[RMDB]
RNA sequence: GGGAACGACUCGAGUAGAGUCGAAAAAUUAAAUCAGGUCUUUCUUUUGCUAAUUUUAAACAAACUUUUAAUCGUUGAUUAGUUUCAACAGUGACACCUGCUCCAGUAGAUGAACCUCUAAACACAGAUCUAGGUUUGAAUUCGUUCAAACCUAGAUAAAAGAAACAACAACAACAAC
Reactivity to DMS in 0.01 (KOAc 150mM, MgCl2 10mM, bicine 150mM(pH8.5), 24C), signal-to-noise 2, nucleotides 027 to 126: a080u050u020a050a070a090u020c030a100g030g000u000c080u020u010u000c010u010u000u000u010g000c070u030a010a060u020u030u000u020a030a030a100c090a030a060a120c080u010u010u040u070a020a190u060c100g020u000u000g000a030u000u010a060g020u000u010u000c040a040a040c120a060g010u010g000a040c140a030c000c020u000g000c010u040c030c050a020g000u010a030g010a060u010g010a070a100c010c000u020c030u010a040a040a070c070a050c060a120g000
Reactivity to 2A3 in 0.01 (KOAc 150mM, MgCl2 10mM, bicine 150mM(pH8.5), 24C), signal-to-noise 5, nucleotides 027 to 126: a010u150u090a040a030a030u090c030a060g000g070u030c020u020u140u000c000u020u150u060u110g020c010u050a050a110u120u080u140u300a060a140a030c060a040a060a030c050u120u130u130u300a080a130u190c120g020u010u020g020a060u000u050a010g130u070u050u090c030a040a050c040a060g030u030g030a000c000a010c010c000u010g020c000u030c020c010a030g050u070a010g040a080u090g010a040a010c010c000u020c030u050a090a170a010c080a010c010a100g100